[RMDB]
RNA sequence: GGGAACGACUCGAGUAGAGUCGAAAAUGCCUAGCUUGGGGUUGAAGCGUUAAAUUUAAUCAAGCUAGCUUAUUUGUGGCGUGUCUGUCCGCAGCAAGUAAGUGAAUUUAAAGACUAGACUAAGCAUGUAGUGCCGCGGAUGUAGAAAUUUCGGACGCAAACACUACGAGUUCGCUCGUAGUGUUUGAAAAGAAACAACAACAACAAC
Reactivity to DMS in 0.01 (KOAc 150mM, MgCl2 10mM, bicine 150mM(pH8.5), 24C), signal-to-noise 1, nucleotides 027 to 156: u000g000c050c010u000a100g020c010u000u000g040g000g000g030u000u000g000a080a140g030c110g030u010u010a020a140a150u000u010u000a070a120u010c060a050a080g050c000u000a220g000c010u000u000a020u000u000u010g020u000g000g030c000g020u000g010u000c050u010g030u000c070c010g030c020a090g010c010a030a030g000u000a020a020g000u010g020a070a060u000u010u000a060a100a080g000a040c030u010a040g010a090c020u010a040a060g010c050a090u010g020u020a130g010u000g020c010c030g070c030g000g010a070u040g000u030a040g020a050a230a080u010u000u000c030g010g020a300c150g040
Reactivity to 2A3 in 0.01 (KOAc 150mM, MgCl2 10mM, bicine 150mM(pH8.5), 24C), signal-to-noise 2, nucleotides 027 to 156: u080g000c000c000u000a010g020c000u010u010g000g000g000g020u030u060g100a080a010g010c050g060u070u110a150a090a160u160u160u160a060a050u080c050a000a000g010c000u000a000g000c000u000u010a000u000u020u010g030u040g180g020c020g000u020g020u000c010u040g010u000c000c020g000c010a040g000c000a000a000g010u000a010a010g000u010g050a000a030u010u070u270a030a030a020g020a040c050u110a010g010a000c010u080a060a000g000c000a030u060g030u080a090g030u020g080c010c000g000c030g020g000a020u060g040u100a060g050a060a170a050u070u070u060c030g010g020a000c000g010